This 177-nucleotide RNA was probed chemically with DMS and 2A3. For 2A3 the reverse transcriptase was SuperScript II with manganese. For DMS the reverse transcriptase was MarathonRT. Conditions: 150 mM KOAc, 10 mM MgCl2 and 150 mM bicine (pH 8.5), 24 C. For 2A3, 13,101 sequencing reads were counted. The DMS profile rests on 19,623 reads.
RNA sequence: GGGAACGACUCGAGUAGAGUCGAAAAUACCAAACGUUCGCGUUUGGUAACAGCCGAACUCAGAAGUGAAACCCCGUAGCGCCGAUGGUAGUGUGGGGUCAAUCUGGGAUGAAUUCGUUCAUCCCAAUAACCCAUUUAUAUUCGUAUAAAUGGGUUAAAAAGAAACAACAACAACAAC
Reactivity to DMS in 0.01 (KOAc 150mM, MgCl2 10mM, bicine 150mM(pH8.5), 24C), signal-to-noise 9, nucleotides 027 to 126: u000a010c000c000a000a010a010c000g020u000u010c220g030c010g020u000u000u000g000g000u000a010a060c140a100g010c080c020g010a090a120c100u000c090a080g010a130a080g010u000g000a160a150a050c010c000c010c010g020u000a110g010c030g010c010c020g010a110u010g030g030u000a040g020u000g010u010g000g000g010g010u000c050a020a080u010c060u000g010g000g010a040u000g000a030a040u000u010c180g010u000u000c030a030u000c000c000c010a040a050
Reactivity to 2A3 in 0.01 (KOAc 150mM, MgCl2 10mM, bicine 150mM(pH8.5), 24C), signal-to-noise 7, nucleotides 027 to 126: u030a000c000c000a010a000a000c010g020u040u050c240g010c010g130u010u010u010g000g000u010a010a030c020a010g120c020c020g050a090a060c040u050c120a120g030a260a020g170u060g060a130a040a040c010c000c010c000g040u050a040g200c020g010c040c020g270a220u270g030g050u060a180g020u020g060u100g020g000g000g010u010c000a010a030u020c020u040g000g020g010a000u010g010a000a030u050u050c090g040u060u000c010a010u000c000c010c000a000a010